[RMDB]
RNA sequence: GGGAACGACUCGAGUAGAGUCGAAAAUGCAAUUCUUUGAUAAAUGUCCUUUCUGCUCCACUAAACUGGACACUGUAUUAGUUGAGACUGGGAGUGGAUUUGGCGUUACUCACUGCGAAAUCCUAAUGCCCAAGGCAGCGGCUGGCACAAAAGGCAAUACAGGUGACAUAUUCGUAUGUCACCUGUAAAAAGAAACAACAACAACAAC
Reactivity to 2A3 in 0.01 (KOAc 150mM, MgCl2 10mM, bicine 150mM(pH8.5), 24C), signal-to-noise 4, nucleotides 027 to 156: u070g000c010a020a040u110u070c060u130u160u140g080a130u120a190a100a070u090g050u160c000c000u020u030u050c030u040g010c000u030c010c000a060c030u070a090a070a030c060u100g040g070a060c070a090c140u090g040u110a150u100u050a080g040u010u060g050a040g020a110c080u090g040g010g020a030g040u050g000g000a020u020u010u050g060g000c000g000u010u050a110c100u080c070a050c060u100g040c040g020a020a060a040u000c010c010u070a110a040u100g050c030c000c020a000a030g080g010c030a010g030c020g060g020c030u030g010g060c030a000c000a050a060a010a010g030g020c010a000a040
Reactivity to DMS in 0.01 (KOAc 150mM, MgCl2 10mM, bicine 150mM(pH8.5), 24C), signal-to-noise 1, nucleotides 027 to 156: u000g020c050a140a130u010u010c040u000u010u010g010a120u000a040a090a150u010g030u000c010c010u010u010u000c030u010g020c030u000c010c020a060c030u000a030a080a080c020u000g000g020a070c090a090c030u010g000u000a080u000u000a050g020u000u010g020a110g020a100c110u000g000g020g010a180g010u020g030g020a040u020u010u000g020g010c070g050u000u000a160c200u000c090a080c060u020g050c050g000a050a050a100u010c020c010u010a110a100u010g010c010c020c050a030a130g010g030c040a050g050c030g020g020c030u020g020g000c000a010c090a020a040a060a050g000g020c060a090a240